[RMDB]
RNA sequence: GGGAACGACUCGAGUAGAGUCGAAAACGUCGGAGCAUUGCAAAGCGGAUCGUCGGGGUGACAAUCGACAAUGUCGCGCGCCGACCACGGAUUAAACAAUGGUUUGAUGACGUCAUACUUGUCAAACGUAUUAAAAAGUGGAAUCAAAACGUCGUCGCAUUAAGCUCUCGUUCGCGAGAGCUUAAUGAAAAGAAACAACAACAACAAC
Reactivity to 2A3 in 0.01 (KOAc 150mM, MgCl2 10mM, bicine 150mM(pH8.5), 24C), signal-to-noise 3, nucleotides 027 to 156: c040g010u060c020g040g030a060g000c060a090u040u200g020c060a170a110a060g040c040g000g030a070u070c050g000u000c000g010g010g000g030u040g040a020c050a050a060u070c020g000a010c050a050a060u180g010u090c000g000c010g000c040g040c040c010g030a010c010c000a030c030g050g000a060u030u130a100a090a020c090a060a110u090g150g000u020u020u040g010a010u010g010a010c010g020u030c000a020u060a110c000u030u050g010u030c000a050a040a010c030g030u100a150u100u100a140a070a020a020a010g060u050g070g050a040a110u120c040a040a060a020a080c080g060u040c030g010u010c030g020
Reactivity to DMS in 0.01 (KOAc 150mM, MgCl2 10mM, bicine 150mM(pH8.5), 24C), signal-to-noise 1, nucleotides 027 to 156: c070g010u010c020g070g030a100g030c030a090u010u010g020c170a050a150a300g000c010g000g010a050u040c000g020u000c000g030g000g100g070u000g040a020c040a150a060u000c050g010a070c030a030a170u010g010u000c070g010c060g030c070g000c050c000g000a050c000c000a100c000g010g000a200u000u000a050a090a060c060a070a060u010g000g000u000u000u010g000a000u000g000a050c030g000u000c250a100u000a110c100u000u000g020u000c030a050a040a010c000g010u010a100u000u000a010a030a070a110a160g000u040g010g000a070a080u000c040a100a040a050a080c000g000u010c040g010u000c010g040